[RMDB]
RNA sequence: GGGAACGACUCGAGUAGAGUCGAAAAGUAUAUGACUUCGGUCAUAUACAAAGGCCGAUCGAAGGCCAACACCGACUUCAACGCCAACCGAUCAAGAAGAAAAAAGAUGCACCUUCGGGUGCAUCAACAAUAAGACUCACUUCGGUGAGUCUUAUUGAAAAGAAACAACAACAACAAC
Reactivity to DMS in 0.01 (KOAc 150mM, MgCl2 10mM, bicine 150mM(pH8.5), 24C), signal-to-noise 3, nucleotides 027 to 126: g000u000a000u000a000u000g020a020c000u000u010c210g030g020u000c000a000u000a000u000a010c010a050a130a210g010g010c030c030g000a140u010c130g010a080a150g000g010c020c010a060a070c150a070c050c010g010a100c060u000u000c040a080a170c060g000c010c020a070a090c100c040g030a090u000c080a080a090g000a110a070g010a010a070a070a060a130a070g000a010u000g000c000a010c000c000u010u010c160g010g000g020u000g000c000a010u010c000a010a080
Reactivity to 2A3 in 0.01 (KOAc 150mM, MgCl2 10mM, bicine 150mM(pH8.5), 24C), signal-to-noise 3, nucleotides 027 to 126: g000u000a000u000a010u010g000a010c000u010u040c180g030g000u000c010a000u000a000u000a000c010a000a080a040g030g000c030c020g040a100u200c100g100a250a070g010g020c000c000a000a000c010a010c010c020g060a060c010u070u050c070a110a010c030g050c040c010a050a070c050c030g090a130u140c070a090a080g060a080a020g020a090a190a030a010a010a030g000a000u010g000c010a000c010c010u040u070c280g130g000g000u000g000c000a000u000c000a000a000